[RMDB]
RNA sequence: GGGAACGACUCGAGUAGAGUCGAAAAGAGCUCCUCCUCCUUGACCUCCACGGGUGAGUUGGAGGAGGGAGUAACGAGCUCAGAGUUGUCCUCGACUGUGACAGUUACAUUUUGGGCACUAUUUAGCGAUGCGCAGCCUGUUCGCAGGCUGCGCAUCAAAAGAAACAACAACAACAAC
Reactivity to 2A3 in 0.01 (KOAc 150mM, MgCl2 10mM, bicine 150mM(pH8.5), 24C), signal-to-noise 2, nucleotides 027 to 126: g000a020g020c000u000c000c000u000c000c010u000c030c000u030u210g070a260c020c000u000c050c080a080c100g160g240g060u300g090a120g000u050u070g000g000a000g060g000a030g000g020g000a000g000u020a000a000c020g010a000g010c000u000c000a000g010a000g120u140u160g000u000c000c000u020c010g020a030c070u000g110u270g190a150c060a040g060u000u120a130c020a300u080u000u090u090g000g000g020c000a040c040u160a220u210u270u100a070g060c050